[RMDB]
RNA sequence: GGGAACGACUCGAGUAGAGUCGAAAACAUGGUGGCAAGUACGACGCGAUAUUGCGCCACCUGCAAUAGAAGCGUAGACAUCAACUGUAGCGAGAGCUACUCAACUUAUGGACCUUAGAGCAAGCGAAGACGACUGGUCCUGUCGGAAUUCGCUAGACGGAGUGGUAGCAUUCGUGCUACCACUCCGAAAAGAAACAACAACAACAAC
Reactivity to 2A3 in 0.01 (KOAc 150mM, MgCl2 10mM, bicine 150mM(pH8.5), 24C), signal-to-noise 2, nucleotides 027 to 156: c070a030u070g000g000u020g040g000c110a060a070g050u110a060c150g010a000c000g050c020g130a110u030a000u000u040g000c030g090c060c010a150c160c140u080g000c000a000a000u020a010g170a130a020g030c000g000u010a000g020a060c000a050u120c030a020a050c150u150g000u000a010g000c020g000a040g000a000g040c010u030a020c020u010c030a080a300c040u150u070a020u110g020g060a050c000c000u040u100a080g010a020g050c040a190a000g000c000g020a000a000g060a020c030g000a020c010u060g000g120u160c020c000u000g000u000c010g000g000a060a070u000u000c000g030c000u000a020g100a090
Structure probing data (2A3) for a 207-nucleotide construct. Values cover nucleotides 27 to 156. For 2A3, 774 sequencing reads were counted. Conditions: 150 mM KOAc, 10 mM MgCl2 and 150 mM bicine (pH 8.5), 24 C.